Chemical mapping of a 207-nucleotide RNA with DMS and 2A3. The DMS profile rests on 5,218 reads. The reactions ran in a buffer of 150 mM KOAc, 10 mM MgCl2 and 150 mM bicine (pH 8.5), at 24 C. For 2A3, 2,372 sequencing reads were counted. The data come from the RNA Mapping Database (RMDB), library OK3TST.

RNA sequence: GGGAACGACUCGAGUAGAGUCGAAAACAUUUGCUGUGCUUACUGCAAUAUCGUAUUCAUUUGUAAUCUGAAGAAAAAACUGUCUCAGUACUGCACUCCUGAAUGGUAGUUGUGAUCCGAUAAUUGGAGCAGCCCCUGCAAGCGCACGAGCGAACAAUCAAGAGAUAGGGUUCGCCCUAUCUCUUGAAAAAGAAACAACAACAACAAC
Reactivity to DMS in 0.01 (KOAc 150mM, MgCl2 10mM, bicine 150mM(pH8.5), 24C), signal-to-noise 3, nucleotides 027 to 156: c060a110u010u000u010g030c010u010g050u000g010c010u000u000a060c050u000g000c040a090a100u000a090u000c050g010u000a140u000u000c050a110u010u020u010g010u000a090a130u000c070u000g010a110a140g000a000a060a060a080a100a080c080u000g000u000c010u000c020a050g000u000a060c060u000g020c030a010c030u000c020c030u010g020a050a070u010g010g030u000a080g020u000u000g010u000g010a130u010c020c000g010a100u010a070a220u000u010g000g020a080g030c050a090g000c020c000c030c000u000g010c040a050a090g000c070g030c020a060c060g010a100g010c030g020a050a080c080a080a190
Reactivity to 2A3 in 0.01 (KOAc 150mM, MgCl2 10mM, bicine 150mM(pH8.5), 24C), signal-to-noise 5, nucleotides 027 to 156: c030a030u030u030u120g010c020u030g010u020g000c000u080u050a060c020u040g050c020a060a110u070a090u170c110g050u080a100u110u110c050a080u020u120u180g120u100a100a130u070c040u060g070a050a090g080a050a170a030a050a050a120c050u060g020u030c010u000c040a020g010u040a060c040u040g000c040a020c030u060c020c030u030g100a130a040u040g030g020u080a080g020u020u070g010u040g060a070u020c020c010g010a040u070a170a150u210u160g020g000a000g000c010a010g010c040c010c000c000u020g040c020a070a040g050c020g010c020a010c040g030a020g030c000g030a020a030c050a050a050